[RMDB]
RNA sequence: GGGAACGACUCGAGUAGAGUCGAAAAGAUAUGGAUGUGCUUUUGACGUGGUCGCUCGGAAACGAGCGGGAGCCACGAUAAGCAUUGUCCUAAGUCAAAGUACCGCUAUGUUCGCAUAGCGGUACAAGCUACAUGUCCUGUUCGCAGGACAUGUAGCAAAAGAAACAACAACAACAAC
Reactivity to DMS in 0.01 (KOAc 150mM, MgCl2 10mM, bicine 150mM(pH8.5), 24C), signal-to-noise 3, nucleotides 027 to 126: g000a040u000a240u000g000g010a010u000g000u000g000c000u000u010u000u000g000a240c100g030u000g020g000u000c000g000c000u000c000g010g020a070a090a130c000g010a010g000c000g010g000g020a250g010c000c010a020c000g000a060u000a010a010g000c000a010u000u010g050u000c000c000u000a030a150g010u000c030a070a080a130g010u000a010c000c000g000c000u000a000u000g000u000u020c230g020c000a010u000a000g010c010g020g000u000a000c010a030a080
Reactivity to 2A3 in 0.01 (KOAc 150mM, MgCl2 10mM, bicine 150mM(pH8.5), 24C), signal-to-noise 4, nucleotides 027 to 126: g020a010u050a030u110g000g010a000u010g010u000g020c010u130u060u090u220g290a240c150g010u020g000g080u300c000g000c010u010c000g020g000a040a030a010c020g000a010g000c040g000g010g000a030g000c000c020a010c050g040a020u010a000a010g000c000a000u090u300g020u000c000c010u010a080a010g030u020c060a180a010a060g010u010a000c000c000g000c010u010a000u010g040u040u070c170g000c190a000u010a020g000c000g000g000u000a000c000a000a000